Source: RMDB library OK2TRN, as collected in RNAgym. An RNA of 177 nucleotides, treated with 2A3 and DMS and read out base by base. DMS adducts were read by reverse transcription with MarathonRT. For 2A3 the reverse transcriptase was SuperScript II with manganese. The RNA was probed in 150 mM KOAc, 10 mM MgCl2 and 150 mM bicine (pH 8.5) at 24 C.
RNA sequence: GGGAACGACUCGAGUAGAGUCGAAAAAGCAGAAACUAGAAUCAGAGGCUGCCACAAAGAAGGCCGCUGCAGAAAAGUUGAAACUGGAAGAGCAGGCCCAGAUCAACAAGGCUGCAGAAGCUGAUGCACCUUAGUAUUUGUUCGCAAAUACUAAGGUAAAAGAAACAACAACAACAAC
Reactivity to 2A3 in 0.01 (KOAc 150mM, MgCl2 10mM, bicine 150mM(pH8.5), 24C), signal-to-noise 3, nucleotides 027 to 126: a000g070c070a050g050a070a130a030c050u130a070g120a160a100u080c030a040g030a030g160g000c020u020g020c010c010a100c050a060a270a030g100a070a060g030g000c010c020g030c020u010g000c010a000g010a010a100a020a020g000u000u020g040a110a180a140c000u000g000g030a070a030g050a090g130c060a020g070g000c000c000c000a000g010a030u030c000a000a020c010a030a030g140g000c010u000g010c000a000g010a030a000g030c010u020g010a030u110g050c060
Reactivity to DMS in 0.01 (KOAc 150mM, MgCl2 10mM, bicine 150mM(pH8.5), 24C), signal-to-noise 7, nucleotides 027 to 126: a090g010c050a050g000a070a070a100c060u000a110g000a130a060u010c080a050g020a100g010g010c020u000g000c080c060a100c130a080a080a140g010a150a260g000g020c010c300g020c000u000g010c010a030g000a030a040a100a300g000u000u000g000a020a090a080c000u000g000g000a070a060g000a110g010c150a030g000g000c170c000c000a010g000a200u000c000a010a010c010a080a180g010g000c000u000g010c020a010g000a080a060g020c020u010g000a090u000g010c140